[RMDB]
RNA sequence: GGGAACGACUCGAGUAGAGUCGAAAACUAGACCAGUCUUCUCGCCUAUUUGCCACGAAUACUGCGUCGUCAAAAUUCACCCAUAGGCUUGCUAUGACUGGAUUUUAACUCCUUGUCUCGUAGCAAACCAUGCUCCUAGUUUCGACUAGGAGCAUGGAAAAGAAACAACAACAACAAC
Reactivity to 2A3 in 0.01 (KOAc 150mM, MgCl2 10mM, bicine 150mM(pH8.5), 24C), signal-to-noise 3, nucleotides 027 to 126: c020u020a020g030a010c000c000a000g000u010c020u010u010c000u020c000g030c000c010u050a080u030u090u160g030c020c020a070c060g000a040a020u020a060c020u030g030c020g070u030c020g020u030c020a000a000a000a100u060u030c000a030c030c010c000a030u020a020g000g020c000u000u020g000c010u030a010u130g010a010c010u010g000g000a000u000u020u030u120a050a050c020u030c000c000u050u090g020u040c030u010c080g050u030a000g000c000a000a020a040
Reactivity to DMS in 0.01 (KOAc 150mM, MgCl2 10mM, bicine 150mM(pH8.5), 24C), signal-to-noise 3, nucleotides 027 to 126: c110u000a050g000a040c020c020a010g000u000c010u010u000c010u010c300g000c020c150u000a060u000u020u000g000c090c290a100c190g000a060a040u040a030c040u000g000c080g000u050c030g000u000c130a020a110a070a130u000u010c160a090c010c040c040a050u000a060g000g030c080u000u000g000c020u000a030u020g000a000c000u000g000g000a040u000u010u000u030a060a160c160u000c000c000u020u000g010u040c060u010c140g000u010a040g020c050a050a020a110
Structure probing data (2A3 and DMS) for a 177-nucleotide construct. DMS (dimethyl sulfate) methylates the pairing face of unpaired adenines and cytosines. The DMS profile rests on 3,448 reads. The data come from the RNA Mapping Database (RMDB), library OK1LIB. Values cover nucleotides 27 to 126. For 2A3 the reverse transcriptase was SuperScript II with manganese. The 2A3 profile rests on 7,175 reads.